RNA sequence: GGGAACGACUCGAGUAGAGUCGAAAAAAUCGGGGAAGAUAAGCUAGCAGCAAAAAGGAACCGAUUCCCACCAAGUUCGGAAAGAGAGACCGGGCGAGGCGCUGAAGAAAGAAUCUCGCUUCAGACAUACAGCCGUGUCGCUUCGGCGACACGGCAACCUAAACACUUCGUUCGCGAAGUGUUUAGGAAAAGAAACAACAACAACAAC
Reactivity to 2A3 in 0.01 (KOAc 150mM, MgCl2 10mM, bicine 150mM(pH8.5), 24C), signal-to-noise 1, nucleotides 027 to 156: a010a010u090c070g010g000g020g020a040a060g060a250u120a180a080g010c030u150a040g070c050a020g000c070a120a080a060a120a070g170g030a040a020c000c020g000a000u000u010c030c000c000a000c010c010a020a020g020u030u030c010g050g030a070a180a000g080a050g000a020g060a050c000c000g010g020g010c020g000a090g000g000c120g000c010u020g000a010a010g020a050a300a000g040a100a090u040c080u090c150g060c050u010u010c010a030g040a060c010a040u130a040c070a040g000c010c000g030u020g000u020c000g000c050u000u030c100g120g000c000g000a010c030a010c020g010g000c010a000a010

Structure probing data (2A3) for a 207-nucleotide construct. For 2A3 the reverse transcriptase was SuperScript II with manganese. It was measured as part of the RMDB library M2RFPK. Reactivities are given for positions 27 through 156. Conditions: 150 mM KOAc, 10 mM MgCl2 and 150 mM bicine (pH 8.5), 24 C.